[RMDB]
RNA sequence: GGGAACGACUCGAGUAGAGUCGAAAAGGGUGAUGUCUCCUAACCUUUAGCAAUGGGGGCACUCGGUCGUGCUGUGGGUAGAAAUUUUAUUUCGUGCCUACCUUAGACGCUUGUCGUCGGGAGUAUGUGGGACUGAUGAACUUCGGUUCAUCAGUAACUCAAGGUAUGUGUUCGCACAUACCUUGAGAAAAGAAACAACAACAACAAC
Reactivity to DMS in 0.01 (KOAc 150mM, MgCl2 10mM, bicine 150mM(pH8.5), 24C), signal-to-noise 2, nucleotides 027 to 156: g010g030g020u000g010a060u010g020u010c010u010c000c020u000a160a100c040c040u000u010u000a080g020c060a070a130u010g000g020g030g010g030c020a030c020u000c070g040g010u000c020g030u030g020c030u000g000u010g040g010g010u010a300g010a020a050a080u000u000u010u000a060u000u020u000c000g010u000g030c000c010u000a060c020c100u000u000a110g030a060c040g000c080u000u010g030u000c020g030u000c000g020g000g030a170g030u010a040u000g010u000g010g010g020a100c000u000g010a030u000g000a030a030c000u000u000c270g060g010u000u000c000a000u000c000a010g000u000a030a300
Reactivity to 2A3 in 0.01 (KOAc 150mM, MgCl2 10mM, bicine 150mM(pH8.5), 24C), signal-to-noise 5, nucleotides 027 to 156: g030g000g000u060g030a070u040g030u030c010u020c000c000u040a070a110c020c000u120u090u200a070g020c070a090a090u080g000g000g000g000g000c010a010c010u010c050g040g000u040c040g040u060g050c050u050g010u050g040g000g020u040a020g110a010a040a030u160u250u130u150a160u040u080u080c080g040u110g000c000c000u010a030c020c000u040u060a030g000a010c010g020c070u110u270g110u290c030g010u020c020g000g030g000a060g030u100a080u120g060u110g030g020g020a000c000u000g000a000u000g000a000a000c000u040u050c220g050g000u000u000c000a000u000c000a000g000u000a010a000
Chemical mapping of a 207-nucleotide RNA with DMS and 2A3. Source: RMDB library M2RFPK, as collected in RNAgym. The reactions ran in a buffer of 150 mM KOAc, 10 mM MgCl2 and 150 mM bicine (pH 8.5), at 24 C. Reactivities are given for positions 27 through 156. The DMS profile rests on 4,516 reads.